[RMDB]
RNA sequence: GGGAACGACUCGAGUAGAGUCGAAAAGGCUACCCUCAGACUUAACCAUCAGCUCUCCUGGGUCGCCAGCCCACCAGCUCACACUAAAGGCUUAGGAUGGUUAUGAUAAGAAAGACAGAUGAUAACAGAAGUUAACCAUGGAUGAGGCUAAAGAGAAGCCCAUAAUAGCUUUCGAGCUAUUAUGGGCAAAAGAAACAACAACAACAAC
Reactivity to 2A3 in 0.01 (KOAc 150mM, MgCl2 10mM, bicine 150mM(pH8.5), 24C), signal-to-noise 1, nucleotides 027 to 156: g040g000c040u040a000c000c000c040u000c010a040g030a130c010u050u100a030a070c080c000a070u120c010a010g000c020u010c010u070c050c080u040g000g000g000u010c000g010c030c000a000g010c000c000c010a000c000c000a040g020c000u020c070a090c010a010c030u140a220a210a070g010g000c000u000u010a050g010g040a000u010g010g040u060u000a030u180g040a100u100a180a040g160a110a020a050g070a060c030a020g100a040u100g010a040u150a150a000c010a060g150a130a000g070u020u050a050a050c010c000a040u020g040g050a010u050g040a010g040g000c010u060a040a190a000g030a010g130a150a160